[RMDB]
RNA sequence: GGGAACGACUCGAGUAGAGUCGAAAACGCUACGGAUAGAUCACAUUAUUAUGUGGAUUCCGUUACAGUUAAAGAGACUGUUGUUCAGUUUAAUUAUCGUAGAGACGGUCAACCAUUCUACGAGCGGAGACGUACUGGUUCGCCAGUACGAAAAGAAACAACAACAACAAC
Reactivity to 2A3 in 0.01 (KOAc 150mM, MgCl2 10mM, bicine 150mM(pH8.5), 24C), signal-to-noise 8, nucleotides 027 to 129: c050g000c050u030a000c000g020g000a030u030a100g190a100u100c010a000c010a000u020u130a120u280u190a040u250g000u010g020g010a020u040u000c000c000g000u010u090a030c030a070g010u030u070a110a070a000g100a020g010a040c060u020g000u030u020g040u090u150c050a070g030u010u040u080a130a160u070u130a080u030c010g000u010a000g000a000g040a080c170g020g020u080c070a100a180c090c010a020u120u000c010u020a010c000g000a010g000c040g050g080a070g010a050
Reactivity to DMS in 0.01 (KOAc 150mM, MgCl2 10mM, bicine 150mM(pH8.5), 24C), signal-to-noise 9, nucleotides 027 to 129: c040g030c130u000a020c020g030g020a070u010a110g030a080u050c000a050c010a030u010u070a110u030u020a000u030g000u000g040g010a080u040u010c000c020g000u000u020a080c080a050g030u000u000a070a070a080g000a130g020a100c050u020g030u060u030g000u020u030c130a190g000u030u010u040a040a040u000u000a070u010c010g000u000a000g020a050g030a080c160g010g010u050c250a130a110c000c040a190u000u000c000u040a000c050g000a000g020c140g000g000a130g000a190

An RNA of 170 nucleotides, treated with 2A3 and DMS and read out base by base. Conditions: 150 mM KOAc, 10 mM MgCl2 and 150 mM bicine (pH 8.5), 24 C.